[RMDB]
RNA sequence: GGGAACGACUCGAGUAGAGUCGAAAACGGUCUGGUGCCGCGUACGGGAUCCGUCCAGCAGGCCCUCGUGGUCGGCAGAUGCAGGGAUCCGCGACGGCAUCGACGUGCAGAGGAGGCGCGCCAGACACACCAUACAUACCUUCGGGUAUGUAUGGUGAAAAGAAACAACAACAACAAC
Reactivity to DMS in 0.01 (KOAc 150mM, MgCl2 10mM, bicine 150mM(pH8.5), 24C), signal-to-noise 2, nucleotides 027 to 126: c140g020g010u010c010u000g030g010u010g010c000c010g020c040g020u020a120c110g000g030g000a010u000c010c020g010u000c060c090a170g010c000a050g020g000c010c000c010u030c300g020u020g010g030u000c020g000g000c020a190g040a080u010g010c180a110g010g000g010a020u010c010c010g000c020g010a090c000g020g010c000a010u000c030g000a050c030g000u010g020c070a120g020a160g000g000a140g010g010c010g010c020g020c030c050a020g010a050c130a200
Reactivity to 2A3 in 0.01 (KOAc 150mM, MgCl2 10mM, bicine 150mM(pH8.5), 24C), signal-to-noise 2, nucleotides 027 to 126: c020g020g020u000c030u070g010g000u010g000c030c000g000c010g030u060a100c060g110g000g000a000u050c000c000g080u000c040c010a040g030c010a010g040g060c040c000c030u180c150g200u300g010g000u030c000g050g040c000a030g030a090u090g100c060a120g100g000g000a040u030c000c030g020c010g000a270c000g000g000c010a000u010c010g000a000c000g020u020g020c030a040g040a100g210g020a040g050g020c010g040c010g000c030c000a010g020a050c010a020
Structure probing data (DMS and 2A3) for a 177-nucleotide construct. For DMS, 1,657 sequencing reads were counted. It was measured as part of the RMDB library RFMREP. The reactions ran in a buffer of 150 mM KOAc, 10 mM MgCl2 and 150 mM bicine (pH 8.5), at 24 C.